[RMDB]
RNA sequence: GGGAACGACUCGAGUAGAGUCGAAAAUGGACUGCGUUCGCGCAGUCCAAAAGAAUAGACGAACACUAGCGUAGAAGUCUUCAGGUCACAUAACUACGCAAAAAAGCUGAGUGUUCGCACUCAGCAAUCCGGUAUUAAGUUUCGACUUAAUACCGGAAAAAGAAACAACAACAACAAC
Reactivity to DMS in 0.01 (KOAc 150mM, MgCl2 10mM, bicine 150mM(pH8.5), 24C), signal-to-noise 3, nucleotides 027 to 126: u000g000g010a010c000u000g010c000g020u000u010c200g030c020g050c010a000g010u000c000c010a010a000a040a090g000a120a070u010a030g000a030c060g010a120a090c130a090c080u000a090g010c000g030u000a010g000a140a120g000u000c020u000u010c100a080g000g000u000c050a030c090a080u000a120a220c020u000a020c010g030c030a000a040a140a070a090a050g000c010u000g010a000g010u000g010u000u000c220g020c010a000c010u000c020a020g010c000a060a060
Reactivity to 2A3 in 0.01 (KOAc 150mM, MgCl2 10mM, bicine 150mM(pH8.5), 24C), signal-to-noise 2, nucleotides 027 to 126: u050g000g000a000c010u010g020c000g020u020u030c120g000c000g000c090a000g020u000c000c000a010a000a000a000g000a000a060u110a050g090a030c070g070a170a010c090a050c230u110a070g000c000g000u000a000g020a130a010g030u010c000u140u110c090a070g010g140u100c020a020c000a110u080a090a040c010u010a000c000g000c000a000a080a000a100a000a000g000c000u000g000a010g000u000g010u000u060c130g010c010a010c000u000c000a000g020c000a000a060